An RNA of 177 nucleotides, treated with 2A3 and DMS and read out base by base. The RNA was probed in 150 mM KOAc, 10 mM MgCl2 and 150 mM bicine (pH 8.5) at 24 C.
[RMDB]
RNA sequence: GGGAACGACUCGAGUAGAGUCGAAAAUCACACUUAGGCAUUUGUGACAUAGCAGCAGGUUGCCAUGGAGAUGAUAGCUUCAUCAGCAACUCUGCUUUGCAAUGACUUCACAGCAAGGUUACUAAGAAGUUGAGCUGAUAUUCGUAUCAGCUCAACUAAAAGAAACAACAACAACAAC
Reactivity to 2A3 in 0.01 (KOAc 150mM, MgCl2 10mM, bicine 150mM(pH8.5), 24C), signal-to-noise 5, nucleotides 027 to 126: u070c000a010c010a010c060u020u000a040g030g010c020a160u050u080u160g010u000g000a010c000a010u020a030g000c000a000g000c000a000g030g010u000u000g000c010c020a010u010g050g010a020g010a030u260g070a120u120a160g100c000u000u000c000a010u000c020a010g000c000a000a000c010u040c020u280g000c000u020u000u050g000c000a020a020u000g030a060c070u030u030c030a000c000a010g050c020a100a130g070g020u070u040a050c010u030a020a030g010a040
Reactivity to DMS in 0.01 (KOAc 150mM, MgCl2 10mM, bicine 150mM(pH8.5), 24C), signal-to-noise 3, nucleotides 027 to 126: u020c030a230c090a150c030u000u000a000g000g010c060a120u010u000u010g010u000g000a030c070a010u000a070g050c000a040g010c010a000g000g010u000u010g000c030c300a040u000g000g000a000g010a140u010g020a180u030a180g010c020u000u000c020a000u000c300a110g000c010a010a000c000u030c000u000g000c000u010u030u020g040c000a070a010u000g010a110c210u000u010c010a010c010a030g010c210a080a060g000g020u010u000a090c010u010a020a010g000a170